[RMDB]
RNA sequence: GGGAACGACUCGAGUAGAGUCGAAAAGGAGAUGACCCUGGCCUCCGCGCUGCUGGGACUGCUACUGCUUGGAGCCACCACACACAAUCGAGUGCUGUUCGGCGUGGCGGCCGGACUGCUCGCGUUGACCAGACUGGAUCUGGGCAUCUUCGUCGUGCACUUGUACUAAUUUCGAUUAGUACAAGUGAAAAGAAACAACAACAACAAC
Reactivity to 2A3 in 0.01 (KOAc 150mM, MgCl2 10mM, bicine 150mM(pH8.5), 24C), signal-to-noise 9, nucleotides 027 to 156: g020g010a020g000a030u090g170a280c000c010c010u040g020g010c020c030u000c020c000g010c020g010c030u110g010c010u080g020g040g140a260c080u090g040c020u070a090c030u070g060c020u060u130g050g010a020g030c010c020a040c020c000a040c000a000c000a000c010a060a080u090c040g040a010g040u060g040c110u030g030u040u010c010g010g000c020g030u040g070g030c000g030g000c000c000g000g010a010c000u020g000c010u020c020g030c030g030u020u060g070a100c030c010a030g040a090c060u130g050g050a140u060c020u050g000g010g000c000a020u000c000u030u020c010g070u030c040g030u080g020
Reactivity to DMS in 0.01 (KOAc 150mM, MgCl2 10mM, bicine 150mM(pH8.5), 24C), signal-to-noise 4, nucleotides 027 to 156: g020g010a060g010a050u000g000a090c010c000c030u010g030g020c040c010u000c020c020g030c180g020c050u010g020c020u010g030g020g020a080c100u000g020c010u000a070c050u000g000c100u000u010g010g020a090g000c020c020a070c010c020a090c050a080c070a100c030a060a090u000c040g020a080g020u000g000c030u010g010u000u000c010g020g020c020g000u000g020g030c300g010g000c010c020g010g000a110c020u000g000c020u000c010g010c100g030u000u010g010a090c000c010a030g010a080c050u010g010g020a300u010c030u000g010g010g010c020a040u000c020u010u010c020g030u000c050g010u000g000